[RMDB]
RNA sequence: GGGAACGACUCGAGUAGAGUCGAAAAGUCGAUACAUGUUAAAAGGAUACGUUCGCUUGCCUACAUUCUUUUAAGCGGUUUUCUACGAAUCUUGGCUGUCUCGUAGAACUGAAUAGCCAACAAAGGAAUCAUCAUAUUUAUUCGUAAAUAUGAUGAUAAAAGAAACAACAACAACAAC
Reactivity to DMS in 0.01 (KOAc 150mM, MgCl2 10mM, bicine 150mM(pH8.5), 24C), signal-to-noise 9, nucleotides 027 to 126: g010u020c040g010a050u030a050c080a070u010g010u000u020a050a060a110a110g010g010a070u000a050c090g010u010u010c060g010c020u000u010g000c020c010u000a050c100a100u010u000c020u000u000u000u010a060a150g000c060g000g000u000u010u020u000c010u000a020c010g010a050a050u010c070u010u010g010g010c050u010g000u020c090u000c010g010u000a020g010a020a060c230u000g010a050a070u020a060g010c010c020a050a110c250a030a070a090g010g000a110
Reactivity to 2A3 in 0.01 (KOAc 150mM, MgCl2 10mM, bicine 150mM(pH8.5), 24C), signal-to-noise 9, nucleotides 027 to 126: g070u060c030g020a020u090a140c070a090u170g070u210u200a070a110a050a040g100g020a070u050a110c060g030u030u060c020g000c060u050u100g050c000c010u040a070c030a080u070u050c030u050u090u030u080a070a030g050c040g020g020u070u040u050u020c010u010a010c020g040a040a050u040c040u070u100g090g000c070u050g050u050c040u000c080g020u020a010g020a040a010c010u020g020a070a050u050a100g010c020c010a030a040c050a070a150a020g140g020a080

Structure probing data (DMS and 2A3) for a 177-nucleotide construct. The 2A3 profile rests on 26,182 reads.